[RMDB]
RNA sequence: GGGAACGACUCGAGUAGAGUCGAAAAGAUAUGGAGUCAACUACCCACCACAGUCUAGACGAGAGAGGACUUAAUCGGAAACGAUUAAGUCCUGGAAUGUCUAGUCUGUGAGGUUGACUCCUAAGUCCAUAGUCUUGUUCUUCGGAACAAGACUAUGAAAAGAAACAACAACAACAAC
Reactivity to DMS in 0.01 (KOAc 150mM, MgCl2 10mM, bicine 150mM(pH8.5), 24C), signal-to-noise 5, nucleotides 027 to 126: g010a160u020a130u010g010g010a010g010u000c000a010a010c010u000a170c050c010c010a300c070c000a000c000a000g000u000c000u000a010g020a010c010g000a120g020a300g000a030g000g000a020c000u010u000a010a000u000c000g010g000a190a100a140c010g000a010u000u000a000a000g010u000c000c000u000g000g000a190a180u000g000u010c030u000a000g000u000c000u000g010u000g010a010g000g000u000u000g000a020c010u000c000c000u000a010a100g000u010c090
Reactivity to 2A3 in 0.01 (KOAc 150mM, MgCl2 10mM, bicine 150mM(pH8.5), 24C), signal-to-noise 3, nucleotides 027 to 126: g160a040u250a190u300g000g000a000g010u000c000a000a000c020u300a300c050c040c030a010c000c010a010c000a010g020u020c000u010a000g000a020c070g020a040g020a010g010a010g300g000a000c020u000u010a010a000u010c010g030g030a120a050a060c020g000a010u010u000a000a010g000u000c000c000u000g000g030a050a050u110g010u010c020u000a000g000u010c000u010g000u010g000a010g000g010u010u000g000a000c000u010c000c000u010a010a010g080u040c070